[RMDB]
RNA sequence: GGGAACGACUCGAGUAGAGUCGAAAACCGAGCACAUGGGCCCGCGGGCCGGGCGGGCUCGGGGCGGCCGGGACGAGGAGGGGCGACGACGAGCUGCGAGCAAAGAUGUGCCCCGGGACCCCCGGCAUUAAGGAUGCAUGUUCGCAUGCAUCCUUAAAAAAGAAACAACAACAACAAC
Reactivity to DMS in 0.01 (KOAc 150mM, MgCl2 10mM, bicine 150mM(pH8.5), 24C), signal-to-noise 3, nucleotides 027 to 126: c000c010g030a120g020c040a050c050a030u020g010g000g010c000c010c000g020c020g030g020g010c030c000g010g000g010c080g000g000g020c010u030c020g020g000g010g020c010g010g020c030c030g010g010g000a110c100g000a250g000g000a240g000g000g000g010c030g010a040c050g020a060c070g000a250g010c010u000g030c150g000a120g010c040a030a070a150g000a150u020g010u040g000c010c000c000c000g000g000g000a170c120c070c000c000c000g020g010c020a060
Reactivity to 2A3 in 0.01 (KOAc 150mM, MgCl2 10mM, bicine 150mM(pH8.5), 24C), signal-to-noise 2, nucleotides 027 to 126: c000c000g010a030g020c010a020c050a180u070g020g070g010c020c000c000g050c010g060g010g000c010c030g000g030g000c070g000g020g000c000u000c000g000g000g000g000c030g010g000c040c010g000g010g000a030c060g030a050g050g060a120g010g030g000g040c070g040a050c050g050a000c040g040a060g030c030u090g060c150g110a090g020c030a070a110a000g070a080u100g030u050g030c010c000c000c000g000g000g000a030c000c000c000c000c000g000g000c000a020

Conditions: 150 mM KOAc, 10 mM MgCl2 and 150 mM bicine (pH 8.5), 24 C.
Chemical mapping of a 177-nucleotide RNA with DMS and 2A3.
The data come from the RNA Mapping Database (RMDB), library RFM100.
DMS adducts were read by reverse transcription with MarathonRT.